[RMDB]
RNA sequence: GGGAACGACUCGAGUAGAGUCGAAAAAGAGCAUGGUAGGGCAGUAUUCCCAUCUGCAGGGAGGUCAUGAUGCCUUAUUUGUUGAAUCAUUAAAAAUGAAUAUCUCAGCUUGGAAGCCCCUGACAGAGGUCUAACUAUAUUUCGAUAUAGUUAGACCAAAAGAAACAACAACAACAAC
Reactivity to DMS in 0.01 (KOAc 150mM, MgCl2 10mM, bicine 150mM(pH8.5), 24C), signal-to-noise 6, nucleotides 027 to 126: a100g000a090g010c040a040u000g010g010u000a030g010g010g000c020a050g010u010a120u010u000c000c010c010a160u010c050u010g000c070a070g010g000g010a070g010g000u010c070a060u010g000a100u000g000c010c020u000u000a020u000u000u000g000u000u000g010a090a120u000c070a030u010u020a020a040a070a090a070u000g000a050a090u010a060u000c050u000c040a050g010c040u000u000g000g010a090a160g000c080c000c010c030u000g010a090c150a080g010a140
Reactivity to 2A3 in 0.01 (KOAc 150mM, MgCl2 10mM, bicine 150mM(pH8.5), 24C), signal-to-noise 3, nucleotides 027 to 126: a000g060a020g020c050a050u110g020g050u040a050g020g030g000c010a010g020u050a090u050u020c000c010c000a010u020c040u060g000c010a000g010g000g030a050g010g070u110c040a060u090g110a060u080g030c000c000u040u020a050u060u100u070g090u020u080g040a040a050u030c030a040u060u140a100a090a060a050a020u050g010a050a050u040a100u130c050u010c040a010g010c010u010u070g040g030a040a020g020c000c010c020c030u020g040a050c010a010g080a020
Chemical mapping of a 177-nucleotide RNA with DMS and 2A3. The RNA was probed in 150 mM KOAc, 10 mM MgCl2 and 150 mM bicine (pH 8.5) at 24 C. For DMS the reverse transcriptase was MarathonRT. 2A3 adducts were read by reverse transcription with SuperScript II with manganese.